[RMDB]
Conditions: 150 mM KOAc, 10 mM MgCl2 and 150 mM bicine (pH 8.5), 24 C. This 207-nucleotide RNA was probed chemically with 2A3 and DMS. For 2A3 the reverse transcriptase was SuperScript II with manganese.
RNA sequence: GGGAACGACUCGAGUAGAGUCGAAAAGAUAUGGACAUCAGGGAGCUCACCAUCACCGAGGAUCGCAAUUCGGAAACGAAUUGCGGGAGGUGAUAAUUGAGCGAAGAACUGAUGUCCUAAGUCAAAAUCCGUUACAUCGUUCGCGAUGUAACGGAAAUCUUUAAGACUGAUUCGUCAGUCUUAAAGAAAAAGAAACAACAACAACAAC
Reactivity to 2A3 in 0.01 (KOAc 150mM, MgCl2 10mM, bicine 150mM(pH8.5), 24C), signal-to-noise 2, nucleotides 027 to 156: g030a010u070a040u110g000g000a000c000a000u000c000a000g000g010g030a040g010c000u000c000a020c060c040a010u010c000a000c000c010g050a260g020g020a010u000c000g000c000a000a000u010u000c010g000g050a060a050a040c000g000a000a010u000u000g000c000g010g000g000a000g000g000u010g000a010u010a010a070u090u050g000a000g010c000g020a070a020g020a010a020c000u000g000a000u000g000u000c000c000u000a000a000g010u000c010a020a020a010a220u010c000c000g000u000u000a000c000a000u000c000g040u060u080c280g010c010g120a000u000g000u000a000a000c000g000g000a010a000a020
Reactivity to DMS in 0.01 (KOAc 150mM, MgCl2 10mM, bicine 150mM(pH8.5), 24C), signal-to-noise 2, nucleotides 027 to 156: g000a120u000a210u010g010g030a020c000a000u000c000a040g010g010g000a300g000c000u000c030a060c180c090a070u000c000a010c000c010g000a120g010g000a070u000c020g010c000a000a000u010u000c000g030g020a130a100a300c000g000a000a010u000u000g000c000g020g010g010a020g000g030u010g000a000u010a010a020u000u000g020a030g010c000g000a080a130g000a140a200c020u020g020a020u000g010u000c000c000u010a000a080g020u020c030a130a080a090a120u000c000c000g030u010u000a000c010a010u010c000g000u000u020c300g040c030g010a020u000g000u000a000a000c000g000g000a000a000a040